[RMDB]
RNA sequence: GGGAACGACUCGAGUAGAGUCGAAAAGUCUGCGGGUCAAGAGCAAACUAACUGUAAUACUAGUUCCUUAGCUUAUUACGAACCUGUGCAGGGUCGUAAAAUGCUGAUGGCUCUUCUUUCUGAUAAUCCAUUAGUCAUUGUUCGCAAUGACUAAUGGAAAAGAAACAACAACAACAAC
Reactivity to 2A3 in 0.01 (KOAc 150mM, MgCl2 10mM, bicine 150mM(pH8.5), 24C), signal-to-noise 3, nucleotides 027 to 126: g060u010c020u040g020c020g040g020g000u040c020a040a000g010a010g050c000a060a040a010c010u050a030a030c020u070g090u220a070a080u060a220c070u030a020g010u050u030c000c000u020u030a010g010c000u020u060a040u050u000a100c020g030a100a110c010c010u060g040u100g160c160a050g010g000g000u000c000g010u010a000a010a010a000u080g000c010u020g010a060u060g030g010c000u000c000u080u020c020u030u060u010c020u020g050a100u080a170a040u010
Reactivity to DMS in 0.01 (KOAc 150mM, MgCl2 10mM, bicine 150mM(pH8.5), 24C), signal-to-noise 2, nucleotides 027 to 126: g010u000c040u010g010c050g000g000g020u010c110a070a050g010a040g010c080a110a060a080c040u000a050a080c040u000g010u010a110a120u010a120c090u010a040g000u000u000c090c030u000u000a030g010c020u000u010a300u000u000a020c020g010a030a030c010c030u000g020u030g040c260a060g010g000g010u000c000g020u000a010a000a030a030u010g000c020u000g010a060u000g020g020c050u000c010u000u000c110u000u000u000c010u000g000a090u000a080a140u020